The record gives the reactivity of an RNA of 177 nucleotides to DMS and 2A3.
RNA sequence: GGGAACGACUCGAGUAGAGUCGAAAAUUUGUGAGGGGGAGGCGUGUCAGUGUAUGCGGAUACAUUAACUUGAAGGGGAGAUCAUAGUGGUGUGGUCCGCCUCUUGUUUGUGGUAAAACCUUGCGAGCUAUAUUAAUUUUUUCGAAAAUUAAUAUAGAAAAGAAACAACAACAACAAC
Reactivity to DMS in 0.01 (KOAc 150mM, MgCl2 10mM, bicine 150mM(pH8.5), 24C), signal-to-noise 4, nucleotides 027 to 126: u020u030u020g040u030g000a090g010g000g010g010g000a060g000g000c050g000u000g000u010c030a080g020u010g010u010a030u020g000c070g010g010a070u010a020c030a030u010u020a040a060c040u010u010g010a050a050g000g000g000g000a190g000a040u010c050a040u000a080g030u020g000g000u010g010u000g000g020u000c030c030g000c020c060u010c030u000u000g010u010u000u000g010u000g010g010u000a030a080a130a110c050c020u010u020g010c100g010a110g010
Reactivity to 2A3 in 0.01 (KOAc 150mM, MgCl2 10mM, bicine 150mM(pH8.5), 24C), signal-to-noise 3, nucleotides 027 to 126: u050u060u080g030u030g010a040g010g010g000g000g010a020g000g020c010g000u050g010u040c030a020g020u000g020u070a050u050g040c000g040g010a000u010a060c000a000u040u080a060a030c020u040u080g050a050a000g010g020g010g000a080g000a030u030c010a000u030a060g130u050g140g040u060g020u040g060g030u000c010c020g080c010c030u020c000u010u040g040u050u060u080g000u040g030g010u010a020a010a040a070c010c000u000u040g030c070g020a040g000

Values cover nucleotides 27 to 126. 2A3 adducts were read by reverse transcription with SuperScript II with manganese. The reactions ran in a buffer of 150 mM KOAc, 10 mM MgCl2 and 150 mM bicine (pH 8.5), at 24 C.